[RMDB]
RNA sequence: GGGAACGACUCGAGUAGAGUCGAAAACUUAACUCAAUAAUCGUAUCAAUAGGAAAGAAUUCUGGAAUCAACGCACCAUGACAUAGUGGCCAAGAAGAACCACAACCAUCAGCUGAUCCGGUUUUGGGACAAAUCCGAGAUUCGUCUCGGAUUUGUCAAAAGAAACAACAACAACAAC
Reactivity to DMS in 0.01 (KOAc 150mM, MgCl2 10mM, bicine 150mM(pH8.5), 24C), signal-to-noise 1, nucleotides 027 to 126: c060u000u000a040a170c050u000c010a040a110u000a040a070u000c020g000u010a040u030c030a050a040u010a070g020g020a060a100a070g020a110a100u000u000c040u000g010g000a080a030u000c060a100a110c120g020c050a080c040c050a040u010g000a020c160a120u000a090g010u000g020g020c140c050a080a080g030a080a160g020a090a170c050c030a000c100a050a070c060c050a060u000c180a050g010c120u030g030a080u000c040c040g000g000u000u000u000u000g000g000
Reactivity to 2A3 in 0.01 (KOAc 150mM, MgCl2 10mM, bicine 150mM(pH8.5), 24C), signal-to-noise 1, nucleotides 027 to 126: c010u100u100a020a010c010u040c120a050a060u140a230a030u150c010g030u040a000u070c040a100a090u140a130g060g000a040a080a110g050a040a070u150u020c000u040g000g070a050a100u070c030a070a040c030g000c000a000c040c020a040u050g020a000c000a080u110a000g060u080g040g000c010c020a020a040g040a050a020g050a000a040c000c000a020c000a020a010c000c010a050u060c000a000g000c020u070g020a010u000c000c030g040g000u080u070u070u020g110g010

An RNA of 177 nucleotides, treated with DMS and 2A3 and read out base by base. The reactions ran in a buffer of 150 mM KOAc, 10 mM MgCl2 and 150 mM bicine (pH 8.5), at 24 C. For DMS the reverse transcriptase was MarathonRT. Reactivities are rounded to 0.1 and cut off at 0 and 3. The 2A3 profile rests on 740 reads.